[RMDB]
RNA sequence: GGGAACGACUCGAGUAGAGUCGAAAAGAUAUGGAUCGAGUUGUAGGGAGCUGAAUAUUCGGAAACGAAUAUAACAGCGAGGAUCUACACCUCGAUCCUAAGUCAAAGACAGGCUUCGGCCUGUCAACAUUUGGCGUAGCUUCGGCUACGCCAAAUGAAAAGAAACAACAACAACAAC
Reactivity to DMS in 0.01 (KOAc 150mM, MgCl2 10mM, bicine 150mM(pH8.5), 24C), signal-to-noise 1, nucleotides 027 to 126: g020a090u010a300u030g020g000a030u000c000g000a040g000u020u000g010u000a000g000g000g000a000g020c000u030g000a180a030u010a000u000u010c000g010g000a160a090a170c000g020a070a000u000a000u000a070a160c000a010g000c000g000a100g040g000a020u010c020u000a010c010a010c070c000u000c000g060a010u010c010c010u000a010a030g010u010c020a120a120a180g000a000c000a000g030g020c000u000u000c170g050g000c000c010u010g030u000c020a090a070